Structure probing data (2A3) for a 207-nucleotide construct.
The RNA was probed in 150 mM KOAc, 10 mM MgCl2 and 150 mM bicine (pH 8.5) at 24 C.
The data come from the RNA Mapping Database (RMDB), library OK3TST.
[RMDB]
RNA sequence: GGGAACGACUCGAGUAGAGUCGAAAACAUUGGAAUACUACAAAAGGGCCGUAGCGCUGGCCCCACAUGGUCAUGCCUACUUCAUGCUUGGCUUCAUCUACUCCACAGGGUUAUUUGGAGAGGUCCCUAAGGAUAAGGCCAAGUCUAACUUAUACUAGGAACGGUGCUAAUUCGUUAGCACCGUUCCAAAAGAAACAACAACAACAAC
Reactivity to 2A3 in 0.01 (KOAc 150mM, MgCl2 10mM, bicine 150mM(pH8.5), 24C), signal-to-noise 1, nucleotides 027 to 156: c010a050u000u090g000g020a060a090u040a210c080u030a040c020a060a150a070a070g020g000g060c030c000g000u110a050g000c090g000c140u120g000g000c000c000c030c000a110c030a060u160g000g000u000c000a000u120g000c020c000u050a110c000u010u080c000a150u270g000c000u000u000g000g000c000u010u030c000a100u000c030u040a070c020u020c020c020a060c010a020g050g000g110u190u170a200u040u260u210g030g020a040g000a020g020g010u150c020c000c000u040a050a080g070g000a010u020a080a030g000g090c000c000a000a000g020u000c000u000a000a000c000u000u300a030u260a210c170u170a100